The data come from the RNA Mapping Database (RMDB), library M2PK50. This 177-nucleotide RNA was probed chemically with DMS and 2A3. For DMS the reverse transcriptase was MarathonRT.
RNA sequence: GGGAACGACUCGAGUAGAGUCGAAAAGCAAAGGGGUUCGCCCCUUUGCAAAUAAACCGAUCAAAUAUAAGAAAAUAACGCGAAGAUCGGAAAAGAGCAAAAAAAGGUUCUACUUCGGUAGAACCAAGUAUUAACUACCGUUCGCGGUAGUUAAUACAAAAGAAACAACAACAACAAC
Reactivity to DMS in 0.01 (KOAc 150mM, MgCl2 10mM, bicine 150mM(pH8.5), 24C), signal-to-noise 1, nucleotides 027 to 126: g010c000a060a000a040g030g000g000g000u010u010c300g040c000c000c010c010u000u000u000g050c000a050a050a060u010a040a080a090c000c010g000a060u000c010a140a160a120u050a140u020a150a150g010a050a100a160a150u000a060a150c150g000c110g010a150a090g020a030u000c000g030g030a030a000a070a040g000a190g010c090a000a010a030a070a030a050a070g000g000u030u000c000u000a010c000u000u000c150g010g000u000a000g000a010a030c000c000a000a020
Reactivity to 2A3 in 0.01 (KOAc 150mM, MgCl2 10mM, bicine 150mM(pH8.5), 24C), signal-to-noise 2, nucleotides 027 to 126: g000c000a000a000a000g000g020g000g000u030u080c090g180c000c020c000c000u010u010u010g000c000a030a000a000u000a010a000a000c000c000g000a030u010c010a030a110a040u180a020u060a180a090g090a080a220a020a050u150a130a050c040g050c070g200a110a010g030a040u020c000g010g050a010a040a020a040g090a030g040c110a080a140a060a020a000a020a110g000g000u000u000c000u000a010c000u000u050c220g070g000u000a000g030a020a000c000c000a000a000
The DMS profile rests on 783 reads. Conditions: 150 mM KOAc, 10 mM MgCl2 and 150 mM bicine (pH 8.5), 24 C. Values cover nucleotides 27 to 126.